[RMDB]
RNA sequence: GGGAACGACUCGAGUAGAGUCGAAAAUUCAGAUUACACUGCUAAUGAUAGCACUGUUCCAACUGAUUAUAUUUGGAGCCGUAUUUUAGGGGAAGAUGGGGCUAAAGGCGACAAGGGCGCUUUAGAUGAAGAGCAAGUAAAAGAAAUCACUGACAAGAAUGCAAACUAGGUUCGCCUAGUUUGCAUUAAAAGAAACAACAACAACAAC
Reactivity to 2A3 in 0.01 (KOAc 150mM, MgCl2 10mM, bicine 150mM(pH8.5), 24C), signal-to-noise 3, nucleotides 027 to 156: u030u010c000a000g010a070u050u080a040c070a020c070u050g000c020u050a090a100u170g150a200u150a130g000c010a030c040u020g010u040u040c030c020a060a050c090u030g060a180u110u210a150u150a050u130u030u060g000g020a020g020c030c000g010u030a060u010u090u040u060a060g000g020g010g000a020a000g030a040u050g050g000g000g000c020u080a060a050a040g020g020c010g000a000c040a020a030g020g010g000c000g000c010u040u040u070a030g010a040u060g050a020a020g020a000g020c020a010a020g040u140a040a120a000a000g040a000a090a000u120c020a000c060u000g080a030c040a010a060g020
Reactivity to DMS in 0.01 (KOAc 150mM, MgCl2 10mM, bicine 150mM(pH8.5), 24C), signal-to-noise 2, nucleotides 027 to 156: u010u010c060a100g000a180u000u000a070c050a070c030u010g030c020u000a040a140u000g000a210u000a040g030c000a020c010u000g030u000u000c050c030a140a150c040u010g030a110u000u000a110u000a080u010u000u000g030g010a120g000c030c070g030u000a030u000u000u030u000a070g030g030g000g020a070a040g010a040u000g030g010g040g040c010u000a050a040a090g030g000c020g040a140c030a030a090g010g040g060c070g020c010u000u000u000a070g000a180u000g000a030a050g000a060g010c050a040a120g030u000a030a060a010a090g010a040a090a090u000c030a090c070u000g000a100c030a090a180g000
The record gives the reactivity of an RNA of 207 nucleotides to 2A3 and DMS. Conditions: 150 mM KOAc, 10 mM MgCl2 and 150 mM bicine (pH 8.5), 24 C. 2A3 adducts were read by reverse transcription with SuperScript II with manganese. Values are in units of 0.01, from 0 to 300, in steps of 10.